This 207-nucleotide RNA was probed chemically with DMS and 2A3. Reactivities are given for positions 27 through 156. 2A3 adducts were read by reverse transcription with SuperScript II with manganese. Conditions: 150 mM KOAc, 10 mM MgCl2 and 150 mM bicine (pH 8.5), 24 C.
RNA sequence: GGGAACGACUCGAGUAGAGUCGAAAAGCCAUCGAGUGCUUGCUGCGCGAAAUCGAGGAAGAAACUAGCAUAGAGCGUAGUCGCGUCUCAGUUAGCAAGAAGUGUUUAGUUUCCGCAAUAAUAUACGAUCAGCUUAUAGAUCGCGCCUUCGAAAGCGCAAUGCCUUAAGGUUCGCCUUAAGGCAUUGAAAAGAAACAACAACAACAAC
Reactivity to DMS in 0.01 (KOAc 150mM, MgCl2 10mM, bicine 150mM(pH8.5), 24C), signal-to-noise 5, nucleotides 027 to 156: g010c010c030a190u000c070g030a180g060u000g000c030u000u000g010c010u000g010c050g000c050g000a080a090a100u010c070g000a100g010g020a130a080g000a090a070a050c010u000a040g000c040a110u000a130g020a300g040c040g060u000a110g050u000c170g000c040g010u010c050u010c050a150g010u000u000a100g040c040a110a110g010a140a180g020u000g000u010u000u000a100g010u000u000u000c010c000g030c050a080a100u010a090a120u010a130u000a040c000g010a030u000c010a170g000c160u010u010a140u000a110g000a020u000c030g020c020g020c040c020u000u000c080g000a080a090a140g010c040g000
Reactivity to 2A3 in 0.01 (KOAc 150mM, MgCl2 10mM, bicine 150mM(pH8.5), 24C), signal-to-noise 5, nucleotides 027 to 156: g040c010c000a060u090c110g070a070g080u090g030c020u050u030g010c010u020g000c000g000c020g050a040a040a050u100c050g020a060g040g070a090a040g040a060a140a040c060u040a030g020c030a070u110a040g080a000g000c020g030u050a060g080u080c040g000c010g130u000c020u010c040a040g030u090u130a020g000c010a040a030g030a130a030g050u050g030u060u070u070a020g000u030u000u000c020c000g020c080a020a000u170a160a040u130a060u050a120c010g020a020u020c040a000g070c030u170u200a110u050a190g010a010u010c010g000c000g020c010c000u060u150c040g050a100a040a020g000c020g010
For DMS, 10,058 sequencing reads were counted.